This 177-nucleotide RNA was probed chemically with DMS and 2A3. Source: RMDB library OK1LIB, as collected in RNAgym. In probing experiments dimethyl sulfate is read out at A N1 and C N3, which are open when not base-paired.
RNA sequence: GGGAACGACUCGAGUAGAGUCGAAAAAUCAAGCCAAUACUAUGAAUCCAGUGACAGUCGUAUACUGGAACGAUGAAGUGAUAUGAUACUCAUGCCACUAUGAAGGACUGUUUCAAGAAUUUUUGUACAUCACCCCUACGUUCGCGUAGGGGUGAUGAAAAGAAACAACAACAACAAC
Reactivity to DMS in 0.01 (KOAc 150mM, MgCl2 10mM, bicine 150mM(pH8.5), 24C), signal-to-noise 1, nucleotides 027 to 126: a060u120c000a090a160g060c050c060a050a010u000a230c010u050a070u020g000a090a070u060c020c000a070g000u030g020a040c010a040g000u030c050g000u100a000u000a010c060u050g000g020a220a090c190g000a190u000g040a000a220g020u000g000a070u110a050u070g020a140u040a040c050u030c000a100u000g000c070c020a010c070u000a050u020g000a140a040g000g000a020c030u000g000u000u010u080c030a060a020g000a050a080u000u010u000u010u050g000u070a160
Reactivity to 2A3 in 0.01 (KOAc 150mM, MgCl2 10mM, bicine 150mM(pH8.5), 24C), signal-to-noise 2, nucleotides 027 to 126: a000u080c060a050a050g160c000c080a120a050u100a040c000u130a100u300g000a040a160u030c040c030a120g000u060g050a050c000a010g000u080c030g000u110a040u000a040c040u000g000g000a050a060c040g190a040u000g080a090a000g000u000g160a060u030a080u300g070a140u180a060c000u000c030a010u000g040c030c000a000c000u030a000u130g140a130a000g030g020a000c000u020g000u010u010u180c010a060a120g040a080a030u000u070u070u040u120g040u160a040
Conditions: 150 mM KOAc, 10 mM MgCl2 and 150 mM bicine (pH 8.5), 24 C.